[RMDB]
RNA sequence: GGGAACGACUCGAGUAGAGUCGAAAAGUUCGCAUGGUGCACUAUUGUGUUAUUAGUACCUAAGUAAGCUUACAAUCGAAAAUGUUUAACCAUAAAAGGGUAAAAUGGUGUAAGACAGUCUGAUACUUUACGGCUUCACGUUUCGACGUGAAGCCAAACAAUCAGAUCGAUUCGUCGAUCUGAUUGUAAAAGAAACAACAACAACAAC
Reactivity to DMS in 0.01 (KOAc 150mM, MgCl2 10mM, bicine 150mM(pH8.5), 24C), signal-to-noise 3, nucleotides 027 to 156: g010u000u000c060g050c050a240u000g000g000u000g030c060a100c050u000a080u000u040g050u020g020u000u000a110u000u000a060g020u000a070c000c020u000a080a160g050u010a090a140g000c040u000u010a020c020a070a090u000c000g020a090a100a140a100u000g000u000u000u000a040a060c010c010a060u000a070a070a140a140g010g010g000u010a020a040a080a050u000g010g010u000g010u000a040a040g020a080c040a110g000u010c040u000g020a090u000a070c010u000u000u010a100c080g010g030c020u000u000c000a000c000g030u000u010u010c300g010a060c010g050u000g010a000a020g010c000c000a000a030
Reactivity to 2A3 in 0.01 (KOAc 150mM, MgCl2 10mM, bicine 150mM(pH8.5), 24C), signal-to-noise 3, nucleotides 027 to 156: g040u060u110c040g000c120a030u040g000g020u060g040c000a030c090u180a130u210u180g030u000g030u050u000a030u080u050a050g020u080a060c020c000u020a080a000g030u000a070a030g030c000u040u020a020c060a060a160u060c060g110a020a040a030a030u010g040u070u040u070a040a030c000c000a010u090a150a170a040a040g070g000g010u050a030a050a050a010u040g010g090u020g020u030a020a020g040a010c010a010g060u010c030u040g040a040u050a240c030u040u030u070a040c080g020g000c000u000u000c000a000c000g030u020u070u130c240g070a010c000g000u000g000a000a000g000c000c000a070a000